Source information:
The record gives the reactivity of an RNA of 177 nucleotides to 2A3 and DMS. DMS adducts were read by reverse transcription with MarathonRT. Values are in units of 0.01, from 0 to 300, in steps of 10. The reactions ran in a buffer of 150 mM KOAc, 10 mM MgCl2 and 150 mM bicine (pH 8.5), at 24 C. For 2A3 the reverse transcriptase was SuperScript II with manganese.

RNA sequence: GGGAACGACUCGAGUAGAGUCGAAAAUUGCAAGCCUUCGGGCUUGCAAGGUGUCGGAAUGCGGAAUAUAUAAUCCUCCGCUUAAGGAUUAUACCGACUUAAGUGCCAGGCUGUUCGCAGCCUGGAAAUGAGGUAGUUGAUUCGUCAACUACCUCAUAAAAGAAACAACAACAACAAC
Reactivity to 2A3 in 0.01 (KOAc 150mM, MgCl2 10mM, bicine 150mM(pH8.5), 24C), signal-to-noise 3, nucleotides 027 to 126: u010u000g000c000a000a010g000c010c000u070u110c260g100g000g000c010u020u000g010c000a000a000g020g010u060g000u000c010g020g070a110a050u110g080c060g050g130a120a000u110a010u010a010u020a150a080u070c010c010u020c070c010g110c070u040u080a030a000g030g010a000u060u050a010u120a110c000c010g030a020c040u070u140a190a050g110u080g160c000c000a000g000g010c000u000g010u050u070c290g000c060a000g010c000c000u000g000g000a020a010
Reactivity to DMS in 0.01 (KOAc 150mM, MgCl2 10mM, bicine 150mM(pH8.5), 24C), signal-to-noise 5, nucleotides 027 to 126: u000u000g010c000a010a010g010c000c000u000u010c210g030g020g010c000u000u000g010c010a000a010g010g020u010g020u000c020g010g010a150a090u000g010c070g000g010a090a080u010a190u000a040u010a040a050u000c070c030u000c150c150g010c130u000u010a070a030g010g010a050u000u000a040u000a110c020c010g000a030c030u000u010a090a100g010u010g000c000c000a010g010g010c000u000g010u000u010c130g020c010a020g000c000c000u000g010g000a000a020